RNA sequence: GGGAACGACUCGAGUAGAGUCGAAAACAUGGGAUGCUCCUCCCGAUUCCGUCCAACCCCUUCCCCCGAGGGUCGCCCAGGAAUGGCGGGACCCACUCGACUGGGGUCCGCGUUCCAUCCUUUCUUACAAGGCACACCUUCGGGUGUGCCAAAAGAAACAACAACAACAAC
Reactivity to DMS in 0.01 (KOAc 150mM, MgCl2 10mM, bicine 150mM(pH8.5), 24C), signal-to-noise 3, nucleotides 027 to 129: c150a160u060g000g000g000a000u020g000c000u020c090c030u000c000c020c030g020a180u060u010c040c020g010u050c020c030a090a170c040c020c000c010u000u010c060c030c000c010c020g030a040g020g030g030u030c090g010c000c050c050a140g000g020a060a050u020g040g040c020g020g040g000a000c020c000c000a030c000u030c100g020a080c250u000g000g000g000g000u010c000c000g020c010g020u050u000c020c000a130u020c070c080u000u000u000c070u010u050a050c190a120a160
Reactivity to 2A3 in 0.01 (KOAc 150mM, MgCl2 10mM, bicine 150mM(pH8.5), 24C), signal-to-noise 3, nucleotides 027 to 129: c010a060u100g020g000g010a070u070g000c040u060c000c000u040c080c000c000g000a030u070u000c020c030g000u020c020c020a050a050c060c000c010c020u040u030c030c020c000c000c000g010a010g000g000g050u010c040g040c030c030c000a000g010g000a040a030u030g300g050c000g010g000g010a030c010c010c000a020c030u190c040g200a170c120u000g020g010g010g000u020c000c000g020c040g000u050u070c000c000a030u040c000c000u060u070u000c020u030u070a120c070a050a040